[RMDB]
RNA sequence: GGGAACGACUCGAGUAGAGUCGAAAAGAUAUGGAUCCUUCAACGAUGUGUGCUUUCCGAUAAGCUGAGGUUCGGAAACGAACCCAGCUUUUGACGGAAUCACACAUCGUUGAAGGAUCCUAAGUCAGUAUUAUCGAUUGUUCGCAAUCGAUAAUACAAAAGAAACAACAACAACAAC
Reactivity to DMS in 0.01 (KOAc 150mM, MgCl2 10mM, bicine 150mM(pH8.5), 24C), signal-to-noise 3, nucleotides 027 to 126: g020a070u010a300u000g010g010a010u000c000c000u000u010c000a010a010c000g000a020u000g010u000g010u000g010c250u000u000u000c000c000g010a180u000a020a020g020c000u000g010a180g020g000u010u000c000g020g010a100a080a180c010g010a010a010c000c000c000a010g000c000u000u000u000u000g020a290c300g000g000a020a010u000c000a020c000a000c000a000u000c000g000u000u000g000a010a000g000g000a010u000c000c000u000a000a070g010u000c050a180

The record gives the reactivity of an RNA of 177 nucleotides to DMS. Conditions: 150 mM KOAc, 10 mM MgCl2 and 150 mM bicine (pH 8.5), 24 C.